[RMDB]
RNA sequence: GGGAACGACUCGAGUAGAGUCGAAAAUAUAUAUUGCUGGCAUUAUCCUUGAUAUUUGCAGAAUUCUAACACUGUGUCUCGGUGUAUAUUCCUCAAUGCCGGAUGUGCAGUAGGCAGUCAGUGGGUAACUGGUUGAUGUAUUCGUACAUCAACCAGUAAAAGAAACAACAACAACAAC
Reactivity to 2A3 in 0.01 (KOAc 150mM, MgCl2 10mM, bicine 150mM(pH8.5), 24C), signal-to-noise 2, nucleotides 027 to 126: u100a010u020a000u010a010u080u140g040c020u070g070g010c010a020u010u060a030u100c030c060u030u100g010a040u040a040u070u080u120g040c020a000g110a120a100u140u040c040u110a080a010c030a000c050u020g020u010g050u140c010u030c070g010g000u000g040u010a050u000a030u070u040c010c020u100c060a100a100u130g060c010c010g060g010a050u050g020u040g000c010a120g100u110a050g100g000c000a010g050u090c000a010g010u020g020g050g000u020a040
Reactivity to DMS in 0.01 (KOAc 150mM, MgCl2 10mM, bicine 150mM(pH8.5), 24C), signal-to-noise 4, nucleotides 027 to 126: u020a080u010a080u000a080u010u000g020c040u000g000g030c030a040u020u000a050u000c020c090u010u020g010a050u000a050u010u000u010g030c060a080g010a080a050u010u000c140u010a100a090c080a060c050u000g020u000g000u010c060u000c050g020g000u000g000u010a060u000a080u010u000c020c010u000c120a060a100u000g020c080c080g000g010a050u000g000u000g000c020a080g000u000a060g040g010c030a060g010u010c070a060g010u000g020g000g000u010a070